[RMDB]
RNA sequence: GGGAACGACUCGAGUAGAGUCGAAAAAGUCAGUGGGCGCUACCAUGCAAACUAGGGCUGGCUACUCUUGCACAGAAUCACAUCUCGAUAAUUGUCAGUGCAAGAAGGACAAUUAUACCAUUUAAUGAAAACGUUUACCUGUUCGCAGGUAAACGAACGCAAUCGCAUUCUUCGGAAUGCGAUUGCGAAAAGAAACAACAACAACAAC
Reactivity to 2A3 in 0.01 (KOAc 150mM, MgCl2 10mM, bicine 150mM(pH8.5), 24C), signal-to-noise 1, nucleotides 027 to 156: a010g020u020c030a010g030u050g050g130g000c060g000c040u160a260c060c050a140u210g020c010a120a000a000c120u260a180g050g100g000c050u000g000g000c000u050a030c000u010c010u000u000g000c000a000c000a000g120a060a080u100c020a080c000a300u000c060u030c060g090a000u000a030a000u010u010g000u000c010a000g000u020g060c000a000a010g010a000a010g020g000a000c000a020a010u000u020a010u050a150c020c040a230u160u090u170a080a060u210g090a040a060a000a020c000g000u000u000u000a000c000c030u000g040u020u030c250g000c050a010g000g040u000a000a000a000c000g000a020a020
The data come from the RNA Mapping Database (RMDB), library M2RFOK. Chemical mapping of a 207-nucleotide RNA with 2A3. The RNA was probed in 150 mM KOAc, 10 mM MgCl2 and 150 mM bicine (pH 8.5) at 24 C.